Chemical mapping of a 207-nucleotide RNA with DMS and 2A3.
For DMS, 4,395 sequencing reads were counted.
Source: RMDB library M2RFPK, as collected in RNAgym.
RNA sequence: GGGAACGACUCGAGUAGAGUCGAAAAGUGCCGGCAAUACAGUGUGUAUGGAGGUCUCAAUGGCUCGGAAGUGCCAGCAAACCCGCGUAGAUAUUAGCAGACGUAUGGGCGUAAGACUUUUAUUGAAAAAAGUACAUAAGCUUCGGCUUAUGUACAAGUACUCAAGAUUGUUCGCAAUCUUGAGUACAAAAGAAACAACAACAACAAC
Reactivity to DMS in 0.01 (KOAc 150mM, MgCl2 10mM, bicine 150mM(pH8.5), 24C), signal-to-noise 2, nucleotides 027 to 156: g030u000g000c010c040g020g010c020a110a110u000a070c020a140g050u010g030u000g000u000a050u000g000g000a120g030g020u020c030u010c040a040a180u000g010g040c020u010c060g030g000a180a120g030u000g000c010c000a080g030c070a040a070a120c010c000c020g000c030g000u010a080g000a140u010a110u000u000a130g040c020a140g000a050c040g000u000a080u000g060g030g020c000g020u000a050a100g000a090c040u000u030u000u000a100u030u000g000a000a040a060a110a110a140g020u000a000c010a010u010a000a020g000c000u000u000c300g040g000c000u000u010a000u000g000u000a010c000a000a050
Reactivity to 2A3 in 0.01 (KOAc 150mM, MgCl2 10mM, bicine 150mM(pH8.5), 24C), signal-to-noise 4, nucleotides 027 to 156: g070u030g020c020c000g010g030c050a050a030u070a070c030a070g080u030g040u040g030u160a070u020g060g020a050g010g030u030c020u000c050a080a130u090g000g010c020u020c040g030g020a110a030g030u020g050c000c010a020g030c040a040a030a060c000c000c000g010c030g020u050a020g070a180u090a100u170u150a050g050c060a040g010a080c010g040u070a080u170g040g020g000c030g010u030a050a000g020a020c000u020u050u110u150a130u120u140g030a060a070a000a000a080a020g000u000a000c000a000u000a000a000g000c000u020u060c180g040g000c010u000u000a000u000g000u000a000c000a000a000
For 2A3 the reverse transcriptase was SuperScript II with manganese. The 2A3 profile rests on 3,262 reads.